Source: RMDB library M2RFPK, as collected in RNAgym.
Structure probing data (DMS and 2A3) for a 207-nucleotide construct.
In probing experiments dimethyl sulfate is read out at A N1 and C N3, which are open when not base-paired.
The reactions ran in a buffer of 150 mM KOAc, 10 mM MgCl2 and 150 mM bicine (pH 8.5), at 24 C.
[RMDB]
RNA sequence: GGGAACGACUCGAGUAGAGUCGAAAAGUUUAUGCAAAGGCACUUCGCAAUGUGUGCUCAAACAUUGCUUAUUGAAACACGCUUCACAAUGUGCGACAAAGAAACAUUGUUAUAAGAGCUAAUGUUUACCACGCCUAAAGGUUCGCCUUUAGGCGAAGCAGCAACAUAAGUUCGCUUAUGUUGCUGCAAAAGAAACAACAACAACAAC
Reactivity to DMS in 0.01 (KOAc 150mM, MgCl2 10mM, bicine 150mM(pH8.5), 24C), signal-to-noise 1, nucleotides 027 to 156: g030u000u000u020a030u000g000c050a010a140a190g060g000c000a050c010u020u000c180g030c140a150a050u000g050u000g010u010g040c040u000c060a050a170a050c000a020u010u010g020c030u000u000a060u000u000g020a190a080a130c070a020c070g000c030u020u000c070a050c090a000a010u000g030u000g030c090g010a170c030a010a090a090g010a140a030a030c000a010u000u000g020u010u000a030u000a070a090g030a010g080c070u010a180a130u000g060u000u000u000a100c050c000a270c000g030c010c020u000a010a010a000g060g020u000u020c300g000c060c000u000u000u000a030g000g000c000g030a000a080
Reactivity to 2A3 in 0.01 (KOAc 150mM, MgCl2 10mM, bicine 150mM(pH8.5), 24C), signal-to-noise 5, nucleotides 027 to 156: g000u030u070u130a130u130g060c090a090a080a070g130g000c030a010c010u060u040c080g000c040a020a020u030g020u000g040u040g010c070u080c170a040a050a000c010a010u010u010g020c030u060u140a170u110u160g080a020a020a010c100a000c070g020c020u030u030c020a000c000a010a000u000g010u010g010c010g050a060c140a080a160a020g090a010a020a010c000a000u000u010g040u070u100a160u040a140a060g030a000g010c060u100a120a030u070g000u040u010u040a120c070c040a080c020g000c000c000u020a010a010a000g030g000u010u040c120g070c040c010u010u010u000a010g000g000c000g000a000a000
Notes
The DMS profile rests on 1,870 reads.